[RMDB]
RNA sequence: GGGAACGACUCGAGUAGAGUCGAAAAGAAAAGAUACAGGCAAGUUGACCGCCUGAAUCGUAGGCAAAAAGACUAAAAGGAUCAGGUUAGCAACAAUGAGUCCUUAAAAUCGACUAAAAUAAAAAAACUAUUGUAUAGCGUUCGCGCUAUACAAUAGAAAAGAAACAACAACAACAAC
Reactivity to DMS in 0.01 (KOAc 150mM, MgCl2 10mM, bicine 150mM(pH8.5), 24C), signal-to-noise 2, nucleotides 027 to 126: g000a070a100a140a110g010a040u020a090c100a000g000g000c000a120a300g030u000u020g010a090c180c180g000c000c000u000g000a040a030u020c000g000u000a040g010g010c060a050a100a020a160a080g000a040c000u010a080a060a040a110g010g040a060u000c060a040g010g000u000u000a110g020c030a010a050c060a040a030u000g000a100g000u010c000c020u000u010a040a060a060a110u010c070g000a120c040u030a060a010a080a050u030a090a010a080a060a070a030a110
Reactivity to 2A3 in 0.01 (KOAc 150mM, MgCl2 10mM, bicine 150mM(pH8.5), 24C), signal-to-noise 1, nucleotides 027 to 126: g010a010a130a000a040g000a010u040a020c010a010g040g040c000a000a180g030u090u110g100a210c070c020g010c000c000u000g000a000a020u000c010g000u010a040g040g000c050a050a000a050a110a170g040a120c020u050a040a070a070a040g050g000a010u000c040a020g010g060u060u110a020g020c010a030a020c010a020a130u070g000a030g130u040c000c000u020u050a030a160a020a020u050c020g020a050c000u080a070a020a060a290u220a100a080a030a030a010a020a010